[RMDB]
RNA sequence: GGGAACGACUCGAGUAGAGUCGAAAAGAGUGAUCCUGCGCCGAAAAUGAUUGGCGAUCAAGCGUUAUACCGAAGCUCUGGACUUUGCCGCAAGGCAGAGUGGUAGAAGAGCGUUGCAUGCGCGUCGCAUCGUUAUGCACUUCGGUGCAUAACGAUGAAAAGAAACAACAACAACAAC
Reactivity to 2A3 in 0.01 (KOAc 150mM, MgCl2 10mM, bicine 150mM(pH8.5), 24C), signal-to-noise 2, nucleotides 027 to 126: g150a020g050u130g050a120u030c000c000u020g000c000g020c000c020g050a080a070a030a090u220g040a280u060u130g010g000c000g010a050u100c080a140a050g030c020g020u170u180a060u060a060c000c060g070a040a010g000c000u000c000u000g000g000a000c000u020u010u010g010c010c000g040c050a080a040g000g010c000a000g000a000g000u030g040g070u110a050g020a170a010g000a000g010c000g010u000u040g040c040a010u040g010c020g000c000g060u010c020g050
Reactivity to DMS in 0.01 (KOAc 150mM, MgCl2 10mM, bicine 150mM(pH8.5), 24C), signal-to-noise 3, nucleotides 027 to 126: g000a100g010u000g000a110u000c020c020u000g020c000g000c040c030g000a030a080a100a120u030g020a140u000u010g010g030c000g020a100u010c110a130a120g020c030g030u000u000a050u000a050c180c050g020a040a090g000c020u000c010u000g000g010a000c020u000u000u000g000c020c000g020c290a110a150g010g000c000a010g010a000g010u000g000g020u000a080g010a140a040g010a030g010c010g000u000u000g010c170a020u000g030c020g000c050g010u000c120g020